Chemical mapping of a 177-nucleotide RNA with 2A3 and DMS.
The RNA was probed in 150 mM KOAc, 10 mM MgCl2 and 150 mM bicine (pH 8.5) at 24 C.
For DMS the reverse transcriptase was MarathonRT.
2A3 adducts were read by reverse transcription with SuperScript II with manganese.
RNA sequence: GGGAACGACUCGAGUAGAGUCGAAAAUUAAAAGUACAGAUCACAUGACUAGAAAAAGAUCAGUACAAAAACUAGUCAUCAAAAAGAUACGAAAUGGAUAUAGAAAUAUAUACCAUCGUAUCAAAAACUACAUCACUUAGUUCGCUAAGUGAUGUAGAAAAGAAACAACAACAACAAC
Reactivity to 2A3 in 0.01 (KOAc 150mM, MgCl2 10mM, bicine 150mM(pH8.5), 24C), signal-to-noise 2, nucleotides 027 to 126: u080u030a060a000a000a040g080u050a070c050a050g080a140u110c040a070c010a170u040g000a020c020u030a050g090a100a190a050a050a020g050a110u170c120a050g080u140a080c020a040a090a000a020a000c020u020a010g020u020c000a010u020c020a050a060a090a090a040g000a010u000a000c000g000a070a050a070u080g000g010a010u010a000u020a010g000a010a040a000u020a000u000a000u020a160c010c000a000u020c000g000u000a000u000c010a000a010a000a000a000
Reactivity to DMS in 0.01 (KOAc 150mM, MgCl2 10mM, bicine 150mM(pH8.5), 24C), signal-to-noise 2, nucleotides 027 to 126: u030u000a020a110a040a160g030u000a090c080a140g000a080u020c050a080c210a060u000g020a040c020u010a040g000a070a070a080a180a130g000a140u010c140a090g000u010a030c040a080a070a010a110a110c020u010a010g010u000c000a010u010c210a000a060a080a060a050g000a000u000a010c000g000a020a040a100u000g000g000a100u000a000u000a000g000a180a060a070u010a000u000a020u000a060c000c000a000u000c010g020u000a010u000c000a050a010a080a090a110